[RMDB]
RNA sequence: GGGAACGACUCGAGUAGAGUCGAAAAUAAAACAUGGUUACCAUAAGCUAUGGCACAAGGUAGCCAUGAAAAGUGCCAUAGCAUAUAAAGCUGAGCGUUAGGAAAAACCUAAUGCUCAGCAAAAAAAUCAUAAGCAUAUGUUCGCAUAUGCUUAUGAAAAAGAAACAACAACAACAAC
Reactivity to DMS in 0.01 (KOAc 150mM, MgCl2 10mM, bicine 150mM(pH8.5), 24C), signal-to-noise 3, nucleotides 027 to 126: u000a100a080a130a130c080a060u000g000g020u000u010a080c010c000a170u010a070a100g040c030u000a010u000g010g010c030a050c040a110a090g010g000u000a040g020c020c010a020u000g000a040a030a100a140g000u000g020c000c000a020u000a010g020c040a140u010a060u000a020a100a100g000c000u000g000a010g010c000g020u010u000a010g000g000a050a200a080a110a120c000c000u000a000a000u000g000c000u000c000a000g000c000a000a000a020a100a040a000a020